[RMDB]
RNA sequence: GGGAACGACUCGAGUAGAGUCGAAAAGAUAUGGACAUGAAUGUGGGAGUCGCUCGGAAACGAGCGAACGACGAUCACAGCAUGUCCUAAGUCAAAAGCGUGGAUUAGCUUCGGCUAAUCCACGCAAGUUCUUACUGUUGUUCGCAACAGUAAGAACAAAAGAAACAACAACAACAAC
Reactivity to DMS in 0.01 (KOAc 150mM, MgCl2 10mM, bicine 150mM(pH8.5), 24C), signal-to-noise 3, nucleotides 027 to 126: g000a020u000a130u010g000g000a010c010a000u000g000a220a070u000g030u010g020g010g020a230g020u000c000g010c000u000c010g020g000a020a050a070c020g010a030g010c010g010a010a000c020g010a030c040g020a230u010c000a000c010a040g000c000a000u000g000u000c000c000u000a020a050g000u000c010a070a080a150a130g000c000g040u000g000g000a010u010u010a000g000c020u000u010c250g010g000c010u000a010a000u000c000c000a010c000g010c000a000a010
Reactivity to 2A3 in 0.01 (KOAc 150mM, MgCl2 10mM, bicine 150mM(pH8.5), 24C), signal-to-noise 3, nucleotides 027 to 126: g020a000u040a020u100g000g000a000c010a020u050g140a300a190u030g100u010g030g050g020a030g010u010c010g000c000u000c000g010g020a040a040a030c020g000a010g040c030g000a050a020c010g010a020c020g040a060u250c000a000c000a000g060c010a010u000g000u020c000c000u000a010a010g020u000c030a010a060a140a010g000c010g000u010g000g010a010u010u010a000g000c030u070u090c300g050g000c000u020a000a000u000c020c000a000c010g000c000a000a000
Description
This 177-nucleotide RNA was probed chemically with DMS and 2A3. For 2A3, 8,004 sequencing reads were counted. DMS adducts were read by reverse transcription with MarathonRT. Conditions: 150 mM KOAc, 10 mM MgCl2 and 150 mM bicine (pH 8.5), 24 C.